[RMDB]
RNA sequence: GGGAACGACUCGAGUAGAGUCGAAAAUUGUCAGCACCAAAGAAGCACCCUAAAUCCCGCUUACAGCGUCCAGCAGUACGUGGGUUCCGCUGCUAACUCUGACAUUUGCGAGCAGUGCCGCGGCGAGCUCCCCAUGUUGGUUCGCCAACAUGGGGAGAAAAGAAACAACAACAACAAC
Reactivity to 2A3 in 0.01 (KOAc 150mM, MgCl2 10mM, bicine 150mM(pH8.5), 24C), signal-to-noise 1, nucleotides 027 to 126: u060u040g020u040c010a010g010c020a020c010c030a130a040a030g090a040a010g060c020a020c010c020c000u030a050a060a050u070c030c000c000g030c010u000u030a040c020a030g010c000g050u120c140c060a050g000c000a020g040u010a050c020g010u020g010g010g000u060u030c010c030g000c020u040g000c000u020a040a050c020u000c020u080g040a060c050a170u100u080u190g090c110g060a070g010c000a020g060u010g070c030c000g010c000g020g010c020g020a050g040
Reactivity to DMS in 0.01 (KOAc 150mM, MgCl2 10mM, bicine 150mM(pH8.5), 24C), signal-to-noise 3, nucleotides 027 to 126: u000u010g010u000c030a060g000c120a080c090c040a040a050a160g020a100a120g010c050a070c060c000c090u010a080a050a100u020c020c010c010g020c030u000u010a040c050a050g020c030g000u010c130c120a110g010c020a040g020u000a040c080g010u010g000g000g010u020u000c090c070g010c050u010g000c020u000a100a100c090u000c000u000g010a050c050a100u010u000u010g010c150g010a130g030c030a040g010u000g030c070c110g030c040g000g010c110g000a180g010
Background: Chemical mapping of a 177-nucleotide RNA with 2A3 and DMS. Reactivities are rounded to 0.1 and cut off at 0 and 3. The data come from the RNA Mapping Database (RMDB), library OK2TST. The RNA was probed in 150 mM KOAc, 10 mM MgCl2 and 150 mM bicine (pH 8.5) at 24 C. For DMS the reverse transcriptase was MarathonRT.